This 177-nucleotide RNA was probed chemically with DMS and 2A3. For DMS, 2,698 sequencing reads were counted. 2A3 adducts were read by reverse transcription with SuperScript II with manganese.

RNA sequence: GGGAACGACUCGAGUAGAGUCGAAAAGAGAAGGGACUGAAUCCUCUGAAUGCAUACUCCGAUCUCGCUGAGUUCCUGGAGACGGAAUGUUAUCAGACACCAUUCAAUAAGGAAGUCCCUGAUGCUAAGGUCAGGUAGUAUUCGUACUACCUGACCUAAAAGAAACAACAACAACAAC
Reactivity to DMS in 0.01 (KOAc 150mM, MgCl2 10mM, bicine 150mM(pH8.5), 24C), signal-to-noise 4, nucleotides 027 to 126: g010a110g010a280a020g020g010g020a010c030u000g000a150a190u000c040c030u000c150u010g010a030a090u000g000c090a090u010a120c160u000c000c000g010a110u000c000u000c020g000c160u010g010a190g010u000u000c010c020u000g010g010a000g000a030c030g010g000a020a060u000g000u000u010a060u000c180a080g000a060c090a090c290c020a030u000u000c010a030a070u010a090a040g000g000a120a040g010u000c000c010c000u000g000a090u000g020c120u010a090
Reactivity to 2A3 in 0.01 (KOAc 150mM, MgCl2 10mM, bicine 150mM(pH8.5), 24C), signal-to-noise 3, nucleotides 027 to 126: g080a000g040a050a020g020g000g010a000c000u030g080a120a100u020c000c000u000c010u000g000a030a010u020g020c040a050u050a170c010u020c010c000g240a300u010c020u000c010g120c090u180g140a060g160u080u030c050c000u010g040g000a000g000a000c000g000g070a040a050u060g010u000u150a170u210c030a050g070a080c020a040c050c000a010u040u090c030a040a070u140a180a050g000g000a010a000g020u000c010c010c000u000g010a050u100g030c030u050a080
The 2A3 profile rests on 2,162 reads. For DMS the reverse transcriptase was MarathonRT.